[RMDB]
RNA sequence: GGGAACGACUCGAGUAGAGUCGAAAACAUCCUAGCUUUACCAUGUUGUGAAACAAUCCAUUAAUUGUAAUAUUACGUUGAGCGCCUUGUUCAUCAAUGCUAUAAUUAGUUACAUAAUAAAUUGAACCCAAUUGAUGAAGUUCGCUUCAUCAAUUGGAAAAGAAACAACAACAACAAC
Reactivity to 2A3 in 0.01 (KOAc 150mM, MgCl2 10mM, bicine 150mM(pH8.5), 24C), signal-to-noise 1, nucleotides 027 to 126: c030a040u000c020c020u030a040g070c000u070u230u120a060c050c010a120u070g020u100u010g090u070g030a100a070a040c030a020a100u040c090c050a020u030u100a050a040u080u040g040u050a000a030u000a000u050u040a020c020g010u020u010g010a030g000c010g090c070c020u130u160g040u170u070c000a000u050c000a000a000u030g020c000u020a020u010a140a100u030u020a000g030u000u030a000c000a050u170a090a040u100a080a300a080u030u020g040a070a050c040
Reactivity to DMS in 0.01 (KOAc 150mM, MgCl2 10mM, bicine 150mM(pH8.5), 24C), signal-to-noise 1, nucleotides 027 to 126: c240a120u010c000c020u000a070g000c040u000u000u000a130c130c120a050u000g050u020u020g020u000g010a100a080a070c080a040a070u020c100c080a060u000u000a030a090u000u000g010u000a090a050u010a030u000u000a040c100g000u000u000g000a010g020c060g000c120c070u010u010g010u000u010c010a090u000c030a020a020u000g000c100u010a120u000a030a030u000u010a050g000u010u000a050c040a060u000a070a060u000a020a040a030u000u000g000a120a110c120